[RMDB]
RNA sequence: GGGAACGACUCGAGUAGAGUCGAAAAGGAUUUGCUGCUAUCAGGGUGACAUUAUGCUCCAACACUGUGCAGAAAUACGAGCUGGCACUCGUGGUGGACGUGGAGGGCAUCGGAGAAGAGGUGCUGGCUGUGUCUGUAAAUUCGUUUACAGACACAGAAAAGAAACAACAACAACAAC
Reactivity to 2A3 in 0.01 (KOAc 150mM, MgCl2 10mM, bicine 150mM(pH8.5), 24C), signal-to-noise 7, nucleotides 027 to 126: g040g010a050u050u040u130g060c020u020g000c020u060a030u200c050a040g050g030g000u060g030a010c000a010u140u210a070u280g020c040u030c040c020a060a050c040a020c050u060g020u050g050c020a020g120a070a090a010u190a060c070g010a020g040c020u060g080g000c030a010c040u030c060g030u020g000g060u050g010g020a040c050g030u050g030g060a090g010g010g000c020a030u050c050g080g030a110g000a110a010g010a020g030g010u040g000c030u020g050g000
Reactivity to DMS in 0.01 (KOAc 150mM, MgCl2 10mM, bicine 150mM(pH8.5), 24C), signal-to-noise 9, nucleotides 027 to 126: g010g000a080u000u000u000g020c020u000g010c030u000a100u010c050a050g000g000g020u010g000a080c070a090u010u010a090u010g010c100u000c020c040a050a070c060a050c030u010g020u000g000c020a040g000a060a060a070u000a080c160g000a080g010c020u000g010g010c070a060c010u000c080g020u000g010g010u000g000g000a060c090g010u000g010g010a120g010g000g010c050a050u000c070g000g010a100g000a090a080g010a110g000g010u000g000c030u000g010g010